[RMDB]
RNA sequence: GGGAACGACUCGAGUAGAGUCGAAAACAGCUUUUUUUCGUCGACCAGUUUGAGCAACAGCGUCGCGACAUAGGAGAUUGCGACCGCGCCGUUGCGAAAGUGCAUGGCGGUGGUGGCCGGCACGCCGCAAUCCCGAAGGCUUCGGCCUUCGGGAUUGAAAAGAAACAACAACAACAAC
Reactivity to 2A3 in 0.01 (KOAc 150mM, MgCl2 10mM, bicine 150mM(pH8.5), 24C), signal-to-noise 5, nucleotides 027 to 126: c030a010g080c020u150u130u020u020u010u060u090c020g020u040c010g020a110c010c000a080g020u010u050u100g140a080g020c020a000a010c000a010g010c000g040u080c000g000c010g030a030c030a070u230a060g110g160a150g170a270u050u080g000c010g020a000c030c030g000c000g030c030c040g020u000u030g000c000g010a040a030a000g100u120g030c040a070u110g070g000c010g010g000u030g020g000u040g030g000c000c010g050g030c010a000c020g020c000c000g000
Reactivity to DMS in 0.01 (KOAc 150mM, MgCl2 10mM, bicine 150mM(pH8.5), 24C), signal-to-noise 2, nucleotides 027 to 126: c190a090g010c050u000u010u000u010u000u000u020c030g020u000c010g010a100c070c050a150g040u000u000u010g000a210g060c030a030a010c060a150g000c040g000u000c000g000c000g030a010c050a100u020a110g000g000a080g000a100u020u000g010c070g000a030c120c120g020c040g020c100c120g030u000u000g010c020g000a080a010a050g020u000g000c020a030u010g000g000c000g000g060u000g000g000u020g000g000c030c030g010g000c070a090c140g010c040c110g000